Structure probing data (DMS and 2A3) for a 207-nucleotide construct. For 2A3 the reverse transcriptase was SuperScript II with manganese. For 2A3, 1,219 sequencing reads were counted. The data come from the RNA Mapping Database (RMDB), library OK3TST. Conditions: 150 mM KOAc, 10 mM MgCl2 and 150 mM bicine (pH 8.5), 24 C.
RNA sequence: GGGAACGACUCGAGUAGAGUCGAAAAACUAAAAGUAAGAAAUCUAAAUGGUUGUCCAUUUGUUUGAGGGUUUUGGUAAUUUCAUCGAUUUUAUCACUGAUGGCGGUAGCCACAACGUUAGCACUACAAUAUAGUAAAUGUAAAGCUGAAUAUGAUACAGGUUAUAAAUAUUCGUAUUUAUAACCUGAAAAGAAACAACAACAACAAC
Reactivity to DMS in 0.01 (KOAc 150mM, MgCl2 10mM, bicine 150mM(pH8.5), 24C), signal-to-noise 2, nucleotides 027 to 156: a110c040u000a040a030a070a100g020u000a110a190g010a080a100a020u000c040u010a080a030a110u010g000g020u000u000g010u010c040c060a150u010u000u000g010u000u000u010g030a080g000g010g020u000u000u000u000g020g020u030a050a070u010u000u000c000a110u000c080g020a110u000u000u000u010a070u000c040a100c070u030g020a130u000g000g040c040g040g040u000a090g020c040c070a080c040a040a040c050g020u000u020a050g010c040a070c050u000a090c020a070a110u020a300u000a100g000u000a030a030a070u000g000u010a060a040a150g020c020u010g010a060a090u010a090u010g000a120u000a150
Reactivity to 2A3 in 0.01 (KOAc 150mM, MgCl2 10mM, bicine 150mM(pH8.5), 24C), signal-to-noise 3, nucleotides 027 to 156: a000c050u050a080a050a020a070g060u070a070a080g040a090a110a050u090c050u080a050a040a080u080g060g030u070u060g010u040c020c020a040u050u040u070g040u050u070u100g050a050g010g040g010u000u050u070u060g020g010u040a050a100u010u100u130c030a040u010c060g010a000u010u090u000u070a070u130c040a020c070u070g010a060u020g050g010c020g040g040u030a040g010c000c000a040c030a000a030c020g050u030u020a000g000c030a010c010u050a020c070a140a010u100a020u090a230g100u100a080a040a060u090g000u050a030a130a000g000c020u020g060a050a050u300a080u300g040a100u300a090